The record gives the reactivity of an RNA of 177 nucleotides to DMS and 2A3.
The 2A3 profile rests on 8,997 reads.
Values cover nucleotides 27 to 126.
For DMS the reverse transcriptase was MarathonRT.
The reactions ran in a buffer of 150 mM KOAc, 10 mM MgCl2 and 150 mM bicine (pH 8.5), at 24 C.

[RMDB]
RNA sequence: GGGAACGACUCGAGUAGAGUCGAAAAUCCAUAAGGUUCGCCUUAUGGAAAAAGCGCCCAGCUCCAGGCCGCAAAAAUAAAUGGAGCACAAGACGAAAGUCAAAACAGUACUCUUCGGAGUACUGAAGUACACAGUAUUCUUCGGAAUACUGUGUACAAAAGAAACAACAACAACAAC
Reactivity to DMS in 0.01 (KOAc 150mM, MgCl2 10mM, bicine 150mM(pH8.5), 24C), signal-to-noise 2, nucleotides 027 to 126: u000c000c000a000u000a000a020g000g010u010u000c300g030c010c000u000u000a020u000g000g000a000a020a060a090a260g010c040g000c010c000c070a060g000c000u010c000c000a040g000g020c020c040g030c100a010a060a040a040a010u000a000a010a040u000g000g000a020g000c000a090c270a070a090g030a000c010g000a140a090a150g000u010c000a100a110a090a110c000a000g010u000a000c000u000c000u000u010c220g010g010a010g000u000a000c000u000g010a000a120
Reactivity to 2A3 in 0.01 (KOAc 150mM, MgCl2 10mM, bicine 150mM(pH8.5), 24C), signal-to-noise 4, nucleotides 027 to 126: u000c000c000a000u010a000a010g020g000u010u100c180g110c020c000u000u000a000u000g000g000a110a010a020a020a000g040c040g000c010c000c000a010g010c000u000c010c000a000g000g000c030c030g020c110a100a140a050a020a020u200a060a040a030u030g000g000a000g020c000a010c020a010a020g010a000c000g030a100a020a000g000u010c000a010a030a000a060c000a000g010u010a000c000u000c010u030u150c240g140g000a000g000u000a000c000u000g000a020a010